[RMDB]
RNA sequence: GGGAACGACUCGAGUAGAGUCGAAAAGGCCGGCUGCUGCGUUUGCGUCCUCUACAUUUUGAACACCUGACCUACAGCACUGGGUCACCCCAGAGCACAGCAGUCCUUGUGCCUGGGCUCUCCAUGGACUGAUGUUAGUGUUCGCACUAACAUCAGUAAAAGAAACAACAACAACAAC
Reactivity to DMS in 0.01 (KOAc 150mM, MgCl2 10mM, bicine 150mM(pH8.5), 24C), signal-to-noise 6, nucleotides 027 to 126: g000g010c030c060g010g010c040u000g010c020u000g020c040g010u010u000u000g000c060g000u000c060c020u000c070u000a070c140a130u010u000u010u010g000a090a090c110a110c100c070u000g010a040c020c020u000a070c090a090g020c090a090c130u010g010g000g000u000c050a090c210c010c000c020a030g000a120g010c010a040c010a020g000c090a080g010u010c050c070u010u010g020u010g010c010c010u000g000g010g010c060u000c020u000c030c070a110u010g010g010
Reactivity to 2A3 in 0.01 (KOAc 150mM, MgCl2 10mM, bicine 150mM(pH8.5), 24C), signal-to-noise 3, nucleotides 027 to 126: g030g010c020c010g030g000c020u040g000c000u020g000c010g070u010u080u100g050c020g010u020c000c030u000c010u040a090c050a200u120u120u070u170g110a100a020c040a040c060c030u030g030a030c000c010u050a040c050a080g020c050a020c090u040g000g000g020u110c030a060c000c010c000c020a020g020a010g000c020a010c000a010g030c030a020g120u110c040c000u070u090g030u080g000c000c000u010g000g020g000c010u010c000u000c030c020a140u150g070g030
The data come from the RNA Mapping Database (RMDB), library OK2TRN. The record gives the reactivity of an RNA of 177 nucleotides to DMS and 2A3. The RNA was probed in 150 mM KOAc, 10 mM MgCl2 and 150 mM bicine (pH 8.5) at 24 C. For 2A3 the reverse transcriptase was SuperScript II with manganese.